Source: RMDB library OK3TST, as collected in RNAgym. This 207-nucleotide RNA was probed chemically with 2A3.

RNA sequence: GGGAACGACUCGAGUAGAGUCGAAAAAAGUAUGCAACAGUACUAAGACCUUGGACCUGCCGUGGCACCAGGGACAAUACGGCAACCUAGGAUAAUAUCUUGCCAGUUCAUGGCUGAGAUUUCGUGGGGGUAUGGUUUUCCAACUUUGACAAUAGCGGUACUGAUGUGGGUUCGCCCACAUCAGUACAAAAGAAACAACAACAACAAC
Reactivity to 2A3 in 0.01 (KOAc 150mM, MgCl2 10mM, bicine 150mM(pH8.5), 24C), signal-to-noise 2, nucleotides 027 to 156: a010a000g210u230a080u150g020c100a080a040c010a210g010u010a010c030u130a060a090g090a150c030c000u100u090g020g000a040c040c020u040g040c020c000g030u030g010g000c080a110c050c060a110g070g000g000a000c030a000a040u040a060c060g000g000c040a000a190c020c000u010a010g070g020a050u020a160a040u030a220u100c030u010u030g000c000c000a050g030u130u250c180a090u080g000g010c000u040g030a030g010a060u000u160u220c100g000u060g050g030g000g010g000u070a020u070g030g000u000u000u050u000c000c000a000a010c070u110u120u080g030a020c010a040a100u000a130g060c100g080